RNA sequence: GGGAACGACUCGAGUAGAGUCGAAAACAUUUAUGCUUAACCGUAGACAAGCUGUAUUAGGUGCUGCAUACUGCUAUAUUGUGCCGAUAUGUUUCAUCCAGUGCCUUCAGCAUUACAGAUGUGUAUCUGAGCUAGAGACGCUAGACCAAAACAUCUCGUUGAUCAGUGCCUUCGGGCACUGAUCAACAAAAGAAACAACAACAACAAC
Reactivity to 2A3 in 0.01 (KOAc 150mM, MgCl2 10mM, bicine 150mM(pH8.5), 24C), signal-to-noise 1, nucleotides 027 to 156: c040a010u120u160u120a100u040g010c010u120u090a020a060c010c010g050u060a080g050a190c000a040a050g000c030u030g000u180a060u060u120a070g140g000u010g070c030u000g020c000a000u040a050c030u050g000c000u000a030u000a060u250u150g070u050g090c030c000g060a090u010a010u180g000u010u030u010c050a060u050c020c000a000g000u000g030c000c030u030u050c020a010g030c000a010u070u140a000c000a000g000a010u000g000u010g000u000a010u050c040u020g030a010g070c000u000a040g000a030g010a120c070g050c030u050a050g030a100c000c050a000a000a150a000c000a000u010c010u010c060